[RMDB]
RNA sequence: GGGAACGACUCGAGUAGAGUCGAAAAGAUUAACUACCAGUUCUUUGACUGUAGGCCAGUAAUUUUCCAUUGCCGUUUCAGUUAAUGGACUAACUUUCUGGAGUAAAGUUUAUUUUUCUCCUUCUUAAAUGCAUAGACAGAACUGAGUAACGUAGUACCAUAUCAGUAGUUUCGACUACUGAUAUGGAAAAGAAACAACAACAACAAC
Reactivity to DMS in 0.01 (KOAc 150mM, MgCl2 10mM, bicine 150mM(pH8.5), 24C), signal-to-noise 3, nucleotides 027 to 156: g010a170u000u000a040a090c050u000a070c030c020a090g020u010u000c020u000u010u000g010a040c030u000g000u000a090g020g020c030c040a070g010u010a030a070u000u000u010u000c020c050a130u000u000g000c020c020g010u010u000u000c030a030g000u010u000a070a080u000g000g010a070c100u000a040a070c030u000u000u000c040u000g010g020a070g020u000a050a070a060g010u000u000u000a130u010u000u010u000u000c020u010c040c020u000u000c050u000u010a050a070a100u000g010c050a100u000a090g000a100c090a050g010a010a030c010u000g000a140g020u000a040a120c100g020u010a100g010u000a180
Reactivity to 2A3 in 0.01 (KOAc 150mM, MgCl2 10mM, bicine 150mM(pH8.5), 24C), signal-to-noise 7, nucleotides 027 to 156: g040a050u170u180a040a060c030u020a040c030c030a010g010u020u010c020u060u070u130g030a040c020u010g030u070a040g030g060c050c040a050g070u110a070a160u050u130u080u040c060c050a070u040u020g020c020c010g140u110u200u130c020a000g000u010u070a020a010u040g000g020a000c010u020a030a040c020u060u160u110c050u110g020g020a040g030u150a010a090a010g020u050u160u130a110u050u150u030u060u030c020u020c020c000u050u080c040u050u150a100a140a060u090g020c030a070u050a120g040a070c050a020g030a040a020c020u050g030a020g100u050a060a020c040g020u030a030g030u020a060
Chemical mapping of a 207-nucleotide RNA with DMS and 2A3.
The RNA was probed in 150 mM KOAc, 10 mM MgCl2 and 150 mM bicine (pH 8.5) at 24 C.
For DMS, 7,197 sequencing reads were counted.
For 2A3, 4,808 sequencing reads were counted.